An RNA of 177 nucleotides, treated with DMS and 2A3 and read out base by base.
DMS adducts were read by reverse transcription with MarathonRT.
Conditions: 150 mM KOAc, 10 mM MgCl2 and 150 mM bicine (pH 8.5), 24 C.
For 2A3 the reverse transcriptase was SuperScript II with manganese.
It was measured as part of the RMDB libraries RFM100 and RFMREP.

RNA sequence: GGGAACGACUCGAGUAGAGUCGAAAAUAACAUCUUGAUCAAUGGCCAUUGUAAGAGUAGAAGGAUCCAUGAAGCAAUAACUCUCUUUGCUGAAAUGUGCGACCAAAUAGACUCUUGAUAUUUCAUUAGCUAUUACAUUGUUCGCAAUGUAAUAGCUAAAAGAAACAACAACAACAAC
Reactivity to DMS in 0.01 (KOAc 150mM, MgCl2 10mM, bicine 150mM(pH8.5), 24C), signal-to-noise 4, nucleotides 027 to 126: u010a100a150c110a050u000c070u000u000g000a070u020c080a060a050u040g000g050c050c040a110u010u000g000u020a070a040g000a020g000u000a070g010a130a150g000g020a100u000c050c020a020u010g000a110a010g000c000a010a000u000a110a090c170u010c140u020c080u000u000u000g020c000u000g010a080a030a040u000g010u000g020c140g020a140c020c010a030a140a060u040a130g000a060c010u000c010u000u010g010a090u020a070u030u010u010c030a080u000u000
Reactivity to 2A3 in 0.01 (KOAc 150mM, MgCl2 10mM, bicine 150mM(pH8.5), 24C), signal-to-noise 5, nucleotides 027 to 126: u070a030a020c020a070u060c050u100u130g050a050u150c050a020a080u090g060g020c030c020a050u020u090g050u110a040a000g010a010g040u030a020g070a170a120g020g000a040u010c000c000a020u070g050a020a000g010c010a010a040u050a100a130c060u040c020u020c010u140u030u000g010c000u020g020a040a070a080u140g020u030g040c090g010a040c020c000a050a050a070u120a040g090a020c010u000c000u000u010g040a020u070a050u150u060u010c030a020u010u010